[RMDB]
RNA sequence: GGGAACGACUCGAGUAGAGUCGAAAACAGCAAAAAGGAACCGAUUCCCACCAAGUUCGGAAAGAGAUACCGUGCGAGGCGCUGAAGAAAGAAUCUCGCUUCAGACACCCCAAGGACUCGACUGAAGAAUGCACGCCAUCGUUCGCGAUGGCGUGAACUCGCAGUUAAUGUUCGCAUUAACUGCGAGAAAAGAAACAACAACAACAAC
Reactivity to 2A3 in 0.01 (KOAc 150mM, MgCl2 10mM, bicine 150mM(pH8.5), 24C), signal-to-noise 1, nucleotides 027 to 156: c010a000g010c020a010a000a030a030a160g080g010a150a050c070c020g000a080u050u020c040c010c000a020c040c050a210a070g060u040u020c030g000g000a110a120a000g020a040g010a000u100a200c010c020g020u030g100c130g030a140g060g040c050g020c020u110g020a020a000g000a020a300a040g030a090a120u090c160u060c190g040c000u040u010c010a070g030a150c040a040c050c000c020c080a000a040g000g020a000c050u040c040g060a070c030u010g000a090a000g030a110a020u190g000c030a010c010g000c000c000a000u000c000g040u090u120c110g000c050g170a000u000g000g000c000g040u000g000a000a030
Overview
Chemical mapping of a 207-nucleotide RNA with 2A3. The reactions ran in a buffer of 150 mM KOAc, 10 mM MgCl2 and 150 mM bicine (pH 8.5), at 24 C.